[RMDB]
RNA sequence: GGGAACGACUCGAGUAGAGUCGAAAAAACAAGUGCACCAAGUUCAGUUAACAGACAAAUACUGCAGUGUUAAUGUAGUAGCUUGGCUUUACGCAGCAAUACUUAAUGGUUGCGCUUGGUUUGUAAACCAUUUACAGCAGUUCGCUGCUGUAAAUGGAAAAGAAACAACAACAACAAC
Reactivity to 2A3 in 0.01 (KOAc 150mM, MgCl2 10mM, bicine 150mM(pH8.5), 24C), signal-to-noise 3, nucleotides 027 to 126: a010a000c010a000a000g000u000g000c010a000c000c010a030a010g020u020u040c060a000g010u070u080a060a020c020a040g040a010c010a000a030a030u010a010c010u010g000c010a010g020u030g080u300u210a110a110u020g010u010a020g000u000a010g000c110u010u020g030g000c000u030u040u030a030c070g010c030a040g020c040a090a090u050a150c000u030u110a070a020u100g020g030u100u060g010c000g000c010u000u000g010g000u040u020u020g100u020a020a010a020
Reactivity to DMS in 0.01 (KOAc 150mM, MgCl2 10mM, bicine 150mM(pH8.5), 24C), signal-to-noise 3, nucleotides 027 to 126: a010a030c010a010a010g010u000g030c010a030c000c000a030a030g000u000u010c110a140g020u000u000a040a060c300a030g010a040c010a000a020a040u000a000c010u000g020c010a030g000u010g040u010u010a070a050u000g020u000a010g010u010a010g000c200u010u000g010g000c010u000u000u010a040c170g020c190a070g020c180a060a080u010a020c020u000u010a040a050u000g010g000u010u010g030c010g020c000u000u000g000g010u000u000u010g000u000a100a120a150
An RNA of 177 nucleotides, treated with 2A3 and DMS and read out base by base. Source: RMDB library 15KREP, as collected in RNAgym. For DMS the reverse transcriptase was MarathonRT.